[RMDB]
RNA sequence: GGGAACGACUCGAGUAGAGUCGAAAAGACGUCAAGAACCAGCUCGACGAGCUCAAGUUGGCGUACGACCAGCUAGAGCUGCAGCGCAAGCAGCUGAAGGUCGACAAGAACGCCGCGGGCACCAAGGAAGAGAAGAAGGCGAUCCAAGACCAGAUCGGAGUAUUCCACAAUUCGUUGUGGAAUACUCAAAAGAAACAACAACAACAAC
Reactivity to 2A3 in 0.01 (KOAc 150mM, MgCl2 10mM, bicine 150mM(pH8.5), 24C), signal-to-noise 5, nucleotides 027 to 156: g060a000c020g000u030c030a010a070g020a090a080c060c010a030g020c020u010c040g150a090c050g010a040g000c010u020c040a100a110g040u100u080g030g010c010g020u040a070c020g050a090c000c000a010g040c050u080a050g020a020g120c000u030g010c010a040g080c040g030c120a110a050g000c000a000g000c000u020g040a090a010g020g000u010c000g000a040c040a040a030g030a070a010c020g000c010c010g010c030g000g010g000c050a030c050c020a030a020g020g010a040a010g020a010g000a060a020g030a030a000g030g010c010g000a000u020c020c030a070a010g050a070c010c030a040g010a080u090c060g030
Reactivity to DMS in 0.01 (KOAc 150mM, MgCl2 10mM, bicine 150mM(pH8.5), 24C), signal-to-noise 2, nucleotides 027 to 156: g000a140c070g070u000c050a060a120g030a150a120c030c040a140g010c000u020c000g010a080c020g000a180g030c050u010c030a060a140g020u000u030g020g030c020g050u000a120c090g000a100c010c010a090g010c030u000a160g010a050g030c050u000g030c000a110g040c080g020c200a110a110g020c070a080g030c010u000g000a090a300g000g020u000c020g030a150c080a080a130g000a060a030c060g010c020c010g060c080g010g000g020c020a120c030c020a040a110g030g000a110a050g020a160g020a070a060g020a060a100g040g020c050g000a050u000c030c040a040a120g010a100c020c040a080g000a100u000c000g060